Chemical mapping of a 177-nucleotide RNA with DMS and 2A3. Values cover nucleotides 27 to 126. In probing experiments dimethyl sulfate is read out at A N1 and C N3, which are open when not base-paired. For DMS the reverse transcriptase was MarathonRT. The RNA was probed in 150 mM KOAc, 10 mM MgCl2 and 150 mM bicine (pH 8.5) at 24 C.

[RMDB]
RNA sequence: GGGAACGACUCGAGUAGAGUCGAAAAGCAGUAGCAUACGUGCUACUGCAACAUAGUAUACCCUGUUGCAUGUAUACUAUGAUAUACCGUAAUGCAACGGAAAGCGGUAGGCUACGGCCUACCGCAACUACGUAGUGCCUUUCGAGGCACUACGUAGAAAAGAAACAACAACAACAAC
Reactivity to DMS in 0.01 (KOAc 150mM, MgCl2 10mM, bicine 150mM(pH8.5), 24C), signal-to-noise 1, nucleotides 027 to 126: g020c000a010g000u000a000g030c010a030u030a070c230g000u000g030c000u020a000c090u000g000c000a100a030c000a000u000a030g020u000a000u000a000c020c230c110u050g010u000u000g000c030a100u000g010u000a010u000a000c060u000a000u000g000a160u000a100u000a150c000c010g040u000a020a000u000g000c020a010a010c000g000g000a100a300a210g000c000g020g000u000a000g000g010c000u000a060c120g010g010c000c000u000a000c030c000g100c000a000a000
Reactivity to 2A3 in 0.01 (KOAc 150mM, MgCl2 10mM, bicine 150mM(pH8.5), 24C), signal-to-noise 5, nucleotides 027 to 126: g010c000a000g000u000a000g000c000a010u020a060c280g120u050g000c010u000a000c010u000g000c000a000a000c000a000u010a000g000u010a010u010a010c010c030c140u150g000u020u010g000c000a010u020g000u000a000u000a000c000u000a000u010g080a020u050a010u030a080c020c010g010u130a110a020u040g000c000a000a010c000g040g090a190a170a000g000c000g000g000u000a000g000g000c000u020a040c300g070g000c000c000u000a000c000c000g000c000a000a000